[RMDB]
Record summary
The record gives the reactivity of an RNA of 177 nucleotides to DMS and 2A3. The reactions ran in a buffer of 150 mM KOAc, 10 mM MgCl2 and 150 mM bicine (pH 8.5), at 24 C. The 2A3 profile rests on 1,787 reads. DMS adducts were read by reverse transcription with MarathonRT.

RNA sequence: GGGAACGACUCGAGUAGAGUCGAAAAUCCCCAUAGUUCGCUAUGGGGAAAAGCCGUACCGCGUAGCACGCGCAUAGGAGCGAAGAUAUCCACGGCACGCGAAAACCUUCGCCUUCGGGCGAAGGAAGUACUUGGACGUGUUCGCACGUCCAAGUACAAAAGAAACAACAACAACAAC
Reactivity to DMS in 0.01 (KOAc 150mM, MgCl2 10mM, bicine 150mM(pH8.5), 24C), signal-to-noise 1, nucleotides 027 to 126: u000c000c000c000c000a020u000a000g010u030u010c190g050c030u000a000u000g040g000g010g000a000a030a030a130g000c030c020g000u000a170c120c000g010c040g040u010a100g040c080a230c030g050c020g010c100a120u030a110g000g000a070g020c060g070a100a120g000a120u000a110u000c030c020a080c030g000g010c020a020c020g000c000g000a080a010a100a120c000c000u000u000c000g010c000c000u000u020c200g010g000g010c000g000a000a020g020g000a010a060
Reactivity to 2A3 in 0.01 (KOAc 150mM, MgCl2 10mM, bicine 150mM(pH8.5), 24C), signal-to-noise 1, nucleotides 027 to 126: u010c000c000c000c000a000u000a000g020u030u060c200g030c100u000a010u010g040g000g000g000a000a100a000a000g050c000c000g020u040a050c040c030g000c030g010u050a030g080c090a060c210g090c030g000c050a020u110a210g060g060a050g030c030g040a070a090g070a180u180a090u160c030c020a030c030g030g000c010a000c010g020c000g030a060a010a010a040c000c010u000u000c000g000c000c000u000u140c230g090g000g000c010g000a000a010g000g000a010a000